Record summary: An RNA of 177 nucleotides, treated with DMS and 2A3 and read out base by base. The RNA was probed in 150 mM KOAc, 10 mM MgCl2 and 150 mM bicine (pH 8.5) at 24 C. The DMS profile rests on 952 reads. The 2A3 profile rests on 868 reads. For 2A3 the reverse transcriptase was SuperScript II with manganese.
[RMDB]
RNA sequence: GGGAACGACUCGAGUAGAGUCGAAAAAAUUGGUCGUGUAUUAGCAGACGAUAUAUAUAUAGGGUCGCGAUGCAUUGUCGUUAGAAAUCAAGAUAUUGGAAUUGGACUUAUCAAUCGAUUCAUAAACGUACGUUGGGAAUUUCGAUUCCCAACGUACAAAAGAAACAACAACAACAAC
Reactivity to DMS in 0.01 (KOAc 150mM, MgCl2 10mM, bicine 150mM(pH8.5), 24C), signal-to-noise 1, nucleotides 027 to 126: a060a050u010u020g010g020u020c040g050u000g030u000a090u000u000a100g020c030a100g110a060c020g000a050u000a040u020a160u030a090u000a070u010a100g000g030g010u000c000g000c010g000a090u010g030c110a040u010u010g010u000c080g000u000u000a110g000a070a040a060u020c050a120a090g000a070u000a060u000u000g000g010a030a040u000u000g000g000a070c040u000u030a090u010c090a110a110u020c050g000a040u000u000c050a050u000a040a030a100c200
Reactivity to 2A3 in 0.01 (KOAc 150mM, MgCl2 10mM, bicine 150mM(pH8.5), 24C), signal-to-noise 1, nucleotides 027 to 126: a010a000u140u070g030g040u010c030g000u040g000u010a100u130u000a100g030c040a080g050a010c000g000a020u040a000u000a010u000a000u020a020u060a280g140g000g040u040c000g040c000g020a000u000g070c000a000u050u100g040u030c010g000u000u010a020g050a110a020a030u090c020a040a040g050a050u090a080u120u140g060g040a090a040u020u070g080g010a010c030u050u090a030u150c060a020a070u150c030g040a000u000u060c040a040u130a070a130a000c050